[RMDB]
RNA sequence: GGGAACGACUCGAGUAGAGUCGAAAACCGUACAUCCAAAAAGGACUCUAUGUAGUAGGAAGUCGAGAGCCUAUGAGAGUUAGAGUCGGUACGAAACAUCUAUUGUCUGCAGUGUAUGUGUUGGUAGCCUGAAUAUCAAGUUCGCUUGAUAUUCAGGAAAAGAAACAACAACAACAAC
Reactivity to 2A3 in 0.01 (KOAc 150mM, MgCl2 10mM, bicine 150mM(pH8.5), 24C), signal-to-noise 1, nucleotides 027 to 126: c000c020g030u020a000c030a080u000c060c000a000a130a000a000a130g100g020a000c000u000c000u000a020u070g000u000a040g000u000a010g060g000a060a000g020u150c120g070a040g000a010g120c010c000u050a020u070g110a090g010a000g120u030u080a000g000a000g030u020c020g010g030u010a000c040g070a110a020a000c020a050u050c030u150a140u130u080g140u060c000u060g030c050a060g060u010g010u140a090u150g100u020g030u090u060g050g000u010a010g060
Reactivity to DMS in 0.01 (KOAc 150mM, MgCl2 10mM, bicine 150mM(pH8.5), 24C), signal-to-noise 2, nucleotides 027 to 126: c060c010g060u020a070c090a080u000c030c090a100a060a040a120a090g020g010a020c000u000c000u000a050u020g000u000a270g000u000a010g000g020a050a030g000u000c300g020a160g010a140g000c020c010u000a010u010g000a220g020a130g030u010u000a030g000a030g010u000c000g000g030u000a030c050g010a100a070a080c080a050u000c060u010a080u000u010g000u020c020u000g000c030a090g010u000g000u010a040u000g000u000g030u000u000g030g020u010a100g020